Chemical mapping of a 177-nucleotide RNA with 2A3 and DMS.

RNA sequence: GGGAACGACUCGAGUAGAGUCGAAAACGAAACACAGUGAGUGGACGGAACAAAUCCCCUUCCCACCUCCCCACUGUCCACUCACUGUCUUCCUAAGAGGAAAUAUAAAUCGGGGGUGGGAAGGGGAGACUCCUAUACGGUUCGCCGUAUAGGAGUCAAAAGAAACAACAACAACAAC
Reactivity to 2A3 in 0.01 (KOAc 150mM, MgCl2 10mM, bicine 150mM(pH8.5), 24C), signal-to-noise 8, nucleotides 027 to 126: c090g040a030a020a010c080a010c000a030g000u000g010a000g000u000g000g020a000c030g020g040a080a020c040a070a130a120u140c000c000c000c010u010u000c000c000c000a010c000c000u020c040c060c030c030a070c030u030g000u000c000c000a010c010u000c010a000c000u000g000u000c000u010u000c000c000u050a100a030g060a070g210g170a040a120a010u300a060u090a040a130a050u240c110g000g000g000g000g000u000g000g000g010a000a000g000g000g010g000a000
Reactivity to DMS in 0.01 (KOAc 150mM, MgCl2 10mM, bicine 150mM(pH8.5), 24C), signal-to-noise 2, nucleotides 027 to 126: c130g000a130a070a000c300a030c020a000g040u000g010a030g000u000g020g000a030c000g000g000a150a100c270a020a050a140u010c000c010c000c010u000u020c010c000c000a000c010c010u000c000c000c140c070a100c070u000g000u000c000c000a000c010u020c000a030c010u000g000u000c100u010u000c020c010u010a060a060g030a070g020g000a050a120a100u030a090u060a090a110a140u060c170g000g000g000g010g020u010g030g000g010a000a010g000g000g010g010a050
About this RNA
Conditions: 150 mM KOAc, 10 mM MgCl2 and 150 mM bicine (pH 8.5), 24 C. The data come from the RNA Mapping Database (RMDB), library OK1LIB.